An RNA of 177 nucleotides, treated with 2A3 and DMS and read out base by base. Reactivities are rounded to 0.1 and cut off at 0 and 3. Source: RMDB library OK1LIB, as collected in RNAgym. The RNA was probed in 150 mM KOAc, 10 mM MgCl2 and 150 mM bicine (pH 8.5) at 24 C. For DMS, 6,413 sequencing reads were counted.
RNA sequence: GGGAACGACUCGAGUAGAGUCGAAAACAUGUGCGCUUGAACUGCGGCGCUCGGGCAGAGUCGAGAGCCCUUCUGGUUCGUUGCUUGACCGAAGAAAUAGUCAUCCAGCUGCGGUGCCGCGGCACCGUCUUCGGUGCGGGUUCGCUCGUACUGAAGAAAAAGAAACAACAACAACAAC
Reactivity to 2A3 in 0.01 (KOAc 150mM, MgCl2 10mM, bicine 150mM(pH8.5), 24C), signal-to-noise 5, nucleotides 027 to 126: c050a060u140g060u090g080c040g010c030u060u100g050a080a050c020u070g030c030g020g020c020g010c010u010c020g010g050g000c090a040g010a020g110u090c030g060a010g010a030g100c000c040c000u040u050c030u040g030g010u000u070c030g020u130u260g000c000u010u120g020a040c000c000g000a070a010g020a070a140a020u170a040g000u020c000a050u020c020c020a020g010c030u060g020c030g030g000u010g010c000c020g050c100g050g000c000a000c000c000g030
Reactivity to DMS in 0.01 (KOAc 150mM, MgCl2 10mM, bicine 150mM(pH8.5), 24C), signal-to-noise 1, nucleotides 027 to 126: c110a080u010g010u010g010c030g000c030u010u000g020a070a100c060u000g010c040g000g000c030g010c040u020c040g030g000g000c040a080g000a050g010u000c050g010a070g020a110g000c050c040c050u000u020c040u000g010g000u000u000c220g000u000u000g000c300u000u000g000a250c000c000g000a190a150g000a250a300a300u110a060g010u000c020a040u010c020c010a090g000c070u010g000c010g000g010u000g010c040c040g030c220g020g000c000a010c010c020g000
Background: The 2A3 profile rests on 6,119 reads.